This 177-nucleotide RNA was probed chemically with DMS and 2A3. Conditions: 150 mM KOAc, 10 mM MgCl2 and 150 mM bicine (pH 8.5), 24 C. Reactivities are rounded to 0.1 and cut off at 0 and 3. As a SHAPE reagent, 2A3 marks flexible, mostly unpaired nucleotides at the ribose 2'-OH.

RNA sequence: GGGAACGACUCGAGUAGAGUCGAAAAUGGUUUUUCACCGUUUAACAAAAUCGGAGCCCAUAAGAGGAUAACAGCUAAAGGGAAUGGAUAGUAUGCUUCAGUUCUUCUACUUCUUCUCUUUAAUUAAUCGUAGGAUAAACUUCGGUUUAUCCUACGAAAAAGAAACAACAACAACAAC
Reactivity to DMS in 0.01 (KOAc 150mM, MgCl2 10mM, bicine 150mM(pH8.5), 24C), signal-to-noise 1, nucleotides 027 to 126: u010g000g010u000u000u010u020u010c130a180c010c010g020u010u010u000a090a100c150a080a070a020a090u000c050g000g010a150g000c050c030c010a100u020a080a110g010a160g000g000a060u010a070a060c070a060g000c170u000a040a030a020g000g000g000a000a030u010g010g010a010u010a010g010u000a040u000g010c100u010u000c160a110g000u040u000c080u000u000c010u000a000c080u000u010c040u000u000c020u000c010u010u000u010a010a080u010u000a030a110
Reactivity to 2A3 in 0.01 (KOAc 150mM, MgCl2 10mM, bicine 150mM(pH8.5), 24C), signal-to-noise 1, nucleotides 027 to 126: u060g000g090u090u030u000u180u220c030a010c040c010g000u010u040u060a090a030c030a030a180a060a030u060c050g060g030a030g060c020c020c020a060u090a020a050g080a010g110g000a030u050a240a030c030a020g000c080u050a010a010a010g060g010g000a010a030u030g020g000a000u010a020g040u090a000u120g010c060u150u210c100a020g100u040u020c030u100u000c000u000a060c050u000u000c000u020u030c000u010c050u000u040u060a150a060u010u250a070a050